Notes:
Conditions: 150 mM KOAc, 10 mM MgCl2 and 150 mM bicine (pH 8.5), 24 C. The record gives the reactivity of an RNA of 177 nucleotides to DMS and 2A3. High DMS reactivity at an A or C suggests that its Watson-Crick edge is free.
RNA sequence: GGGAACGACUCGAGUAGAGUCGAAAAGAUAUGGACUGUAGCGACGAUCGUACUGGUUCGGAAACGAACUUACGGGAGCUAUGGUCCUAAGUCAAAACUGCGAUAAGUCUUCGGACUUAUCGCAGAAGAUGUCCGUAUACUUCGGUAUACGGACAUCAAAAGAAACAACAACAACAAC
Reactivity to DMS in 0.01 (KOAc 150mM, MgCl2 10mM, bicine 150mM(pH8.5), 24C), signal-to-noise 2, nucleotides 027 to 126: g010a010u030a300u010g000g000a020c000u000g030u020a000g020c000g020a140c300g000a040u010c000g010u020a020c300u010g000g000u020u000c000g000g010a100a050a240c000g010a010a000c000u000u000a000c010g010g000g000a040g000c000u000a000u000g000g000u000c000c000u010a000a040g000u000c020a070a060a090a160c020u000g020c000g000a000u000a010a000g000u000c000u000u010c250g030g000a060c020u000u000a000u000c000g010c000a000g010a030a060
Reactivity to 2A3 in 0.01 (KOAc 150mM, MgCl2 10mM, bicine 150mM(pH8.5), 24C), signal-to-noise 2, nucleotides 027 to 126: g060a020u070a080u130g050g010a010c020u010g010u050a010g000c000g300a300c020g000a170u020c000g020u010a040c190u170g080g010u000u020c000g030g000a070a060a050c010g010a000a000c020u010u010a000c000g000g000g020a000g000c000u000a010u010g010g000u000c010c000u010a020a010g010u000c030a010a020a160a190c000u000g020c030g010a000u010a000a000g000u040c030u060u210c300g100g000a010c000u000u010a000u000c000g000c000a000g000a000a020